[RMDB]
RNA sequence: GGGAACGACUCGAGUAGAGUCGAAAACUUGUUCAUGCACUGCAGUGACACAGUUUCUUUUACAGAGAAGGAACUUCAUGCUGGCUUUCCAGGCAGCUGAAAGUGUCGGCAUCAAAUCCACACUGGUGAGCCCUUGUCCCCCUGAGUCACUGGCAGACAGUGCCACUAUAUUCGUAUAGUGGCACUGAAAAGAAACAACAACAACAAC
Reactivity to DMS in 0.01 (KOAc 150mM, MgCl2 10mM, bicine 150mM(pH8.5), 24C), signal-to-noise 1, nucleotides 027 to 156: c140u000u000g000u000u000c060a120u000g020c020a230c010u030g020c010a090g020u000g000a070c040a060c110a090g040u000u000u000c010u020u000u040u000a300c130a180g000a180g000a070a050g040g000a030a040c080u000u010c020a050u000g010c010u010g010g000c020u000u000u000c010c050a070g030g010c110a000g000c010u000g010a070a090a030g020u000g030u000c070g000g000c080a130u000c110a060a090a180u010c060c020a100c060a110c040u000g000g020u000g010a060g020c030c020c000u000u000g000u010c000c000c010c050c010u010g010a120g010u020c030a020c000u010g050g020c030a070g000a230
Reactivity to 2A3 in 0.01 (KOAc 150mM, MgCl2 10mM, bicine 150mM(pH8.5), 24C), signal-to-noise 2, nucleotides 027 to 156: c040u020u050g010u130u100c050a070u190g040c070a010c040u010g000c000a000g000u000g020a000c010a000c010a070g000u020u060u000c010u050u080u060u170a260c130a070g150a010g050a180a010g040g020a000a030c010u000u050c040a040u160g050c100u100g060g020c000u070u070u020c010c030a020g060g000c060a110g030c050u080g040a160a090a050g120u080g040u070c040g070g030c010a080u100c130a120a060a080u070c040c020a010c000a030c020u000g000g000u040g050a010g010c030c000c030u100u100g040u130c010c020c000c020c030u010g020a010g020u000c020a010c000u000g090g120c000a020g010a080
Conditions: 150 mM KOAc, 10 mM MgCl2 and 150 mM bicine (pH 8.5), 24 C. This 207-nucleotide RNA was probed chemically with DMS and 2A3. Reactivities are given for positions 27 through 156. It was measured as part of the RMDB library OK3TST.